[RMDB]
RNA sequence: GGGAACGACUCGAGUAGAGUCGAAAAUAGCUUUUAAAGCGCCUCAAUAGCAUUCUAAGAGGCGCAUUUUUUAGGAAGGUGAUUCUAUGCCUGAAUACAUAAAACCGUCGCAGUGGUGCGCACAGAAGCAAGAAGAAGCAUUAGAGCGCGGCGACACAGCCAUCGUAAUAUUCGUAUUACGAUGGCUAAAAGAAACAACAACAACAAC
Reactivity to 2A3 in 0.01 (KOAc 150mM, MgCl2 10mM, bicine 150mM(pH8.5), 24C), signal-to-noise 2, nucleotides 027 to 156: u090a050g070c050u260u100u070u030a030a130a010g000c000g000c000c000u000c000a000a100u020a120g010c070a180u250u050c100u170a210a010g000a220g000g000c300g000c280a080u120u000u010u010u040u050a000g020g010a040a000g020g000u040g070a060u170u010c030u190a070u080g020c000c000u000g080a040a060u060a080c040a020u200a050a100a040a020c050c040g010u030c010g010c010a040g040u030g020g050u040g000c020g010c000a050c010a090g080a030a010g040c060a050a020g050a060a010g070a060a000g040c010a000u060u070a050g010a020g050c010g000c000g010g060c000g000a020c010a000c010
Reactivity to DMS in 0.01 (KOAc 150mM, MgCl2 10mM, bicine 150mM(pH8.5), 24C), signal-to-noise 1, nucleotides 027 to 156: u000a100g020c050u000u000u000u000a050a000a300g000c000g040c000c000u000c000a000a190u000a080g000c070a200u000u000c000u030a150a300g010a030g020g050c000g040c000a010u000u000u000u000u000u000a130g010g050a120a070g000g010u000g000a030u000u000c030u000a030u040g010c030c010u040g000a100a230u000a030c020a130u000a010a000a040a070c040c000g000u000c040g000c050a060g040u080g000g040u000g020c120g000c040a140c060a060g040a090a150g000c020a060a100g010a080a150g020a030a090g000c020a040u010u010a160g000a150g000c120g030c040g030g010c010g010a090c170a110c120

Chemical mapping of a 207-nucleotide RNA with 2A3 and DMS. For 2A3 the reverse transcriptase was SuperScript II with manganese. The reactions ran in a buffer of 150 mM KOAc, 10 mM MgCl2 and 150 mM bicine (pH 8.5), at 24 C. Source: RMDB library OK3TST, as collected in RNAgym. DMS adducts were read by reverse transcription with MarathonRT. Values cover nucleotides 27 to 156.